[RMDB]
RNA sequence: GGGAACGACUCGAGUAGAGUCGAAAAGUGCUGAUUGAAAUUCAUGGGAGCCUCUCCAUAAUGGAUGAACGCCGCGCUAGUUCGCGCAGUCGCGACGUAAACGCUCUGUCUUCCCGUUCAGGCCUCACGCUAGCUAUAUGUUCGCAUAUAGCUAGCGAAAAGAAACAACAACAACAAC
Reactivity to DMS in 0.01 (KOAc 150mM, MgCl2 10mM, bicine 150mM(pH8.5), 24C), signal-to-noise 3, nucleotides 027 to 126: g030u020g000c030u000g010a130u000u000g020a110a090a080u010u000c070a030u000g010g010g000a060g010c100c040u010c030u020c010c000a160u000a080a090u010g000g000a070u020g010a080a090c020g000c020c020g010c000g000c010u000a100g020u010u000c170g020c170g010c100a050g000u010c030g020c010g000a010c020g010u010a050a070a130c190g000c000u000c010u000g010u000c110u000u000c010c000c010g030u010u000c120a060g030g000c020c050u000c130a190
Reactivity to 2A3 in 0.01 (KOAc 150mM, MgCl2 10mM, bicine 150mM(pH8.5), 24C), signal-to-noise 1, nucleotides 027 to 126: g040u050g000c040u010g090a210u230u060g060a030a200a040u160u040c040a050u070g000g000g010a040g060c030c030u140c000u000c030c020a000u210a230a130u170g080g020a030u070g050a090a010c020g000c020c000g000c010g000c010u010a070g050u090u110c080g000c040g030c040a000g110u120c010g020c000g020a010c020g000u030a030a110a000c000g000c000u050c010u000g060u000c000u050u040c000c010c000g000u060u030c010a020g080g020c040c000u080c030a060
Chemical mapping of a 177-nucleotide RNA with DMS and 2A3. Reactivities are rounded to 0.1 and cut off at 0 and 3. Conditions: 150 mM KOAc, 10 mM MgCl2 and 150 mM bicine (pH 8.5), 24 C. For DMS, 2,006 sequencing reads were counted. For 2A3, 1,152 sequencing reads were counted. 2A3 adducts were read by reverse transcription with SuperScript II with manganese.